[RMDB]
RNA sequence: GGGAACGACUCGAGUAGAGUCGAAAAGUGCACUGGGGUCAGCAUAGAUACUUGUGUGUACGUAUAUUUGUGGUUUUUGUUAUUUUUCUACUUAUAGAUGGCUAAAAUCUGAGUUUGAAAGGUGGCCGAUUAUUCAAAACUUCGGUUUUGAAUAAUCAAAAGAAACAACAACAACAAC
Reactivity to DMS in 0.01 (KOAc 150mM, MgCl2 10mM, bicine 150mM(pH8.5), 24C), signal-to-noise 3, nucleotides 027 to 126: g020u000g020c020a010c030u000g010g000g010g010u000c030a140g020c200a100u010a120g000a060u000a060c020u000u000g020u010g020u000g000u000a020c030g020u000a090u010a050u010u000u010g010u010g000g000u000u000u000u000u010g000u000u000a060u010u000u000u000u000c020u000a020c040u000u010a120u010a060g000a020u000g000g010c140u010a070a080a100a030u000c010u000g000a040g010u000u000u000g010a010a020a050g000g020u000g000g010c060c300
Reactivity to 2A3 in 0.01 (KOAc 150mM, MgCl2 10mM, bicine 150mM(pH8.5), 24C), signal-to-noise 1, nucleotides 027 to 126: g020u020g030c000a000c070u030g050g000g000g000u010c040a030g040c110a170u200a120g050a030u230a300c040u120u100g100u030g000u000g010u170a000c000g090u000a090u020a040u180u100u020g090u080g000g040u030u000u000u160u080g040u020u000a040u030u010u000u000u010c010u030a070c020u080u030a140u130a270g020a020u030g070g010c070u110a040a030a130a000u000c000u010g040a040g090u180u250u090g020a020a010a010g020g000u000g000g010c010c010
The data come from the RNA Mapping Database (RMDB), library RFMREP. Chemical mapping of a 177-nucleotide RNA with DMS and 2A3. 2A3 adducts were read by reverse transcription with SuperScript II with manganese. Conditions: 150 mM KOAc, 10 mM MgCl2 and 150 mM bicine (pH 8.5), 24 C. For 2A3, 687 sequencing reads were counted.